Source: RMDB library TTRDEL, as collected in RNAgym. Structure probing data (DMS and 2A3) for a 177-nucleotide construct. 2A3 adducts were read by reverse transcription with SuperScript II with manganese. DMS adducts were read by reverse transcription with MarathonRT.
RNA sequence: GGGAACGACUCGAGUAGAGUCGAAAAGAUAUGGACGCACUGCACAGGACUUUGAUCUCGGAAACGAGGGAGUCCGUGUUGCGUCCUAAGUCAAACCAAUAGUCUGCGUUCGCGCAGACUAUUGGAACACAUUCAACCCGUUCGCGGGUUGAAUGUGAAAAGAAACAACAACAACAAC
Reactivity to DMS in 0.01 (KOAc 150mM, MgCl2 10mM, bicine 150mM(pH8.5), 24C), signal-to-noise 2, nucleotides 027 to 126: g000a040u020a300u010g000g000a000c010g000c000a040c300u010g010c020a010c010a130g020g010a010c000u000u000u020g010a110u020c020u010c000g030g000a090a040a120c010g010a040g000g010g010a010g010u000c000c000g020u000g000u020u040g010c000g030u000c010c000u000a000a050g020u000c020a140a090a280c000c000a020a000u000a000g000u000c000u000g030c000g000u000u010c200g010c010g040c000a000g000a000c000u010a000u000u000g000g000a070a110
Reactivity to 2A3 in 0.01 (KOAc 150mM, MgCl2 10mM, bicine 150mM(pH8.5), 24C), signal-to-noise 2, nucleotides 027 to 126: g040a010u110a070u180g010g020a000c020g050c020a040c200u260g020c060a050c130a300g030g010a010c030u220u250u230g140a170u120c000u000c000g000g060a080a080a050c010g020a000g000g020g010a020g000u020c000c010g000u000g000u010u030g000c000g010u000c000c000u020a070a010g010u020c060a050a080a100c010c000a000a000u010a000g010u000c000u000g000c020g100u060u050c300g020c000g000c160a000g010a000c000u000a000u000u000g000g010a010a010